[RMDB]
An RNA of 207 nucleotides, treated with DMS and 2A3 and read out base by base. The data come from the RNA Mapping Database (RMDB), library OK3TST. The reactions ran in a buffer of 150 mM KOAc, 10 mM MgCl2 and 150 mM bicine (pH 8.5), at 24 C.
RNA sequence: GGGAACGACUCGAGUAGAGUCGAAAACUGGCCAAUGGACACACCCUGGACCUCAACUGCCUGGUUGCCAGCCAGGCUCCCCACACCAUCACCUGGUAUAAGCGUGGAGGCAGCUUACCCAGCCGGCACCAGGUACAGGGCCAGCAGGUGGGGAGGAUAUAAUUAGGCAUUUCGAUGCCUAAUUAUAAAAAGAAACAACAACAACAAC
Reactivity to DMS in 0.01 (KOAc 150mM, MgCl2 10mM, bicine 150mM(pH8.5), 24C), signal-to-noise 2, nucleotides 027 to 156: c060u000g010g020c060c090a090a110u010g030g000a120c010a060c040a050c040c010c020u000g020g020a040c040c000u000c010a070a100c070u000g010c000c000u000g030g000u000u010g030c020c040a120g000c010c050a030g030g000c040u010c000c010c000c020a100c040a080c010c030a080u000c080a150c140c040u010g080g060u000a140u000a100a010g000c030g030u000g000g000a120g020g030c140a110g040c060u010u010a060c060c010c040a090g010c040c000g010g000c010a080c010c000a040g010g030u000a000c030a040g030g000g000c000c000a030g020c050a100g010g000u010g010g020g030g020a140g020g000a260
Reactivity to 2A3 in 0.01 (KOAc 150mM, MgCl2 10mM, bicine 150mM(pH8.5), 24C), signal-to-noise 3, nucleotides 027 to 156: c040u050g080g030c020c040a100a170u180g050g040a030c040a010c000a010c070c010c010u020g010g040a160c020c000u050c050a090a140c060u020g010c000c000u020g030g020u150u140g010c010c010a000g010c020c030a000g010g000c000u000c000c000c020c000a010c000a000c010c000a030u230c030a090c090c070u030g000g060u120a140u120a180a070g110c070g050u020g000g040a220g110g000c120a010g000c010u070u150a220c060c080c030a010g000c000c000g000g000c000a010c000c000a000g030g000u030a030c120a000g000g000g030c010c000a010g040c060a050g060g000u020g010g010g020g000a060g000g030a010